[RMDB]
Structure probing data (DMS and 2A3) for a 177-nucleotide construct. 2A3 adducts were read by reverse transcription with SuperScript II with manganese. It was measured as part of the RMDB library OK2TST. DMS adducts were read by reverse transcription with MarathonRT. Conditions: 150 mM KOAc, 10 mM MgCl2 and 150 mM bicine (pH 8.5), 24 C.

RNA sequence: GGGAACGACUCGAGUAGAGUCGAAAAUGUCCGCAUCGUCGUCGGGAAGCUCAUGUCGCACCACGGGUACGCGCAGACCAAUCCGGACCAGGACGUCCUCAAGUUGCGGAGCCCGCGCGCACGUGCCGUAGUUUUAAAUAUUCGUAUUUAAAACUACAAAAGAAACAACAACAACAAC
Reactivity to DMS in 0.01 (KOAc 150mM, MgCl2 10mM, bicine 150mM(pH8.5), 24C), signal-to-noise 9, nucleotides 027 to 126: u010g010u000c020c020g020c080a070u000c080g010u000c050g010u000c020g010g000g010a110a110g010c070u000c070a090u010g010u000c060g020c060a090c070c060a090c120g000g000g020u000a070c060g020c050g020c050a090g000a090c060c070a080a150u000c050c050g010g010a080c080c140a120g000g000a110c100g000u000c020c030u000c100a100a120g000u000u000g010c030g010g000a130g010c030c020c020g010c100g010c060g000c070a040c040g010u010g010c120c140
Reactivity to 2A3 in 0.01 (KOAc 150mM, MgCl2 10mM, bicine 150mM(pH8.5), 24C), signal-to-noise 8, nucleotides 027 to 126: u100g030u000c010c010g010c030a070u080c040g110u000c000g010u000c020g020g000g040a060a030g020c020u030c070a120u130g090u130c030g000c030a040c040c010a050c060g030g000g010u050a020c040g010c010g000c050a020g040a060c010c030a030a050u030c040c040g030g040a070c050c020a050g070g040a050c050g040u060c000c010u050c050a080a070g070u120u100g070c010g020g000a050g030c000c010c000g020c010g000c000g000c010a020c030g030u050g030c040c060